[RMDB]
RNA sequence: GGGAACGACUCGAGUAGAGUCGAAAAAGGAGUAUCCAAGCAAAGAAGGGGAAGGAUCUCGAGGAAAACAUCUCCCAAGAAGAAGCGGGAACAAUCUCAAGAAGAGGAGGAUUCCCCGAGACGCUGACGAGGGACCCGUUCGCGGGUCCCAAAAGAAACAACAACAACAAC
Reactivity to DMS in 0.01 (KOAc 150mM, MgCl2 10mM, bicine 150mM(pH8.5), 24C), signal-to-noise 3, nucleotides 027 to 129: a130g060g000a090g030u060a070u050c010c090a110a140g160c070a060a040a030g000a050a070g000g030g020g000a020a000g000g070a070u030c050u000c040g000a070g000g020a130a060a080a130c180a080u010c030u070c030c010c030a050a050g010a060a010g010a100a060g040c080g000g050g110a030a050c120a010a080u090c090u010c050a080a030g020a080a060g000a130g000g020a060g000g030a010u000u020c020c030c030c010g000a040g000a020c190g020c070u000g030a010c090g060a200
Reactivity to 2A3 in 0.01 (KOAc 150mM, MgCl2 10mM, bicine 150mM(pH8.5), 24C), signal-to-noise 2, nucleotides 027 to 129: a000g040g010a030g010u040a040u000c020c020a060a010g100c030a030a130a020g010a050a040g000g000g000g000a020a000g000g050a030u000c000u000c020g000a010g030g010a030a000a030a030c020a080u080c020u000c070c000c000a040a000g040a070a010g010a070a000g000c030g000g000g020a010a000c000a040a000u090c010u000c120a000a000g020a000a000g010a040g070g000a010g000g050a080u060u050c030c010c010c000g020a030g050a030c060g010c110u120g000a040c040g030a080
Structure probing data (DMS and 2A3) for a 170-nucleotide construct. For 2A3, 2,865 sequencing reads were counted. In probing experiments dimethyl sulfate is read out at A N1 and C N3, which are open when not base-paired. It was measured as part of the RMDB library 15KLIB. 2A3 adducts were read by reverse transcription with SuperScript II with manganese. Conditions: 150 mM KOAc, 10 mM MgCl2 and 150 mM bicine (pH 8.5), 24 C. The DMS profile rests on 3,497 reads.